This 207-nucleotide RNA was probed chemically with 2A3.

RNA sequence: GGGAACGACUCGAGUAGAGUCGAAAACUGCCGCCGGGACGCAGUGAUCCUCGCAGGGUCGCACGGUCGCCUCGGGUCGGCCUCGUGUCGGCUCGACCUGCGAGGGGAGCGAGUGGUGAGCCCGACCAAAACUUUCUCGCCUUCGGGCGAGAAAGAAUCGUUGUACAACGUUCGCGUUGUACAACGAAAAAGAAACAACAACAACAAC
Reactivity to 2A3 in 0.01 (KOAc 150mM, MgCl2 10mM, bicine 150mM(pH8.5), 24C), signal-to-noise 1, nucleotides 027 to 156: c010u010g010c000c010g000c020c010g070g020g200a060c050g020c000a150g140u000g010a000u010c010c000u000c000g000c010a000g060g010g080u230c060g030c040a060c130g040g010u000c010g000c000c010u000c000g010g000g000u030c000g030g010c010c010u060c110g300u300g000u000c000g000g000c030u030c010g030a060c000c000u000g000c020g010a000g000g000g000g000a030g000c000g000a020g020u080g000g000u010g030a020g000c040c060c010g000a010c010c000a040a070a000a060c000u020u000u030c000u010c010g000c020c000u010u120c200g050g000g000c010g000a000g000a000a000a000g000a000a050
The 2A3 profile rests on 882 reads. For 2A3 the reverse transcriptase was SuperScript II with manganese. Conditions: 150 mM KOAc, 10 mM MgCl2 and 150 mM bicine (pH 8.5), 24 C. It was measured as part of the RMDB library M2RFPK. Reactivities are given for positions 27 through 156.